[RMDB]
RNA sequence: GGGAACGACUCGAGUAGAGUCGAAAACUGACACGUCGAGCAGGGAGGAAACUCGGGCUUAGUGAACCGGUGGUACCGUGUGGAAGGGCCAUCGAUCAACGGAUAAAAGUUACCCCGGGGAUAACAGGCUGAUCUCCCCCGAGAGUCCAUAUCGGCGGCACACAAGAUACUUCGGUAUCUUGUGUGCAAAAGAAACAACAACAACAAC
Reactivity to 2A3 in 0.01 (KOAc 150mM, MgCl2 10mM, bicine 150mM(pH8.5), 24C), signal-to-noise 1, nucleotides 027 to 156: c010u010g010a040c020a010c080g130u020c020g040a010g000c000a090g040g070g000a060g050g000a190a000a020c010u010c000g010g010g000c040u070u080a050g040u070g060a100a090c040c000g000g040u060g070g010u280a300c000c000g090u290g060u140g230g030a140a140g030g000g080c000c000a000u020c000g000a050u060c030a030a100c010g000g010a010u050a080a190a000a000g070u110u080a110c000c000c040c000g020g000g000g000a050u040a030a060c030a040g130g000c010u050g010a060u030c050u100c000c000c000c000c000g010a000g010a010g040u000c010c010a020u040a050u140c010g000g000c080g010
The data come from the RNA Mapping Database (RMDB), library PDB130. Chemical mapping of a 207-nucleotide RNA with 2A3. 2A3 adducts were read by reverse transcription with SuperScript II with manganese. Values cover nucleotides 27 to 156.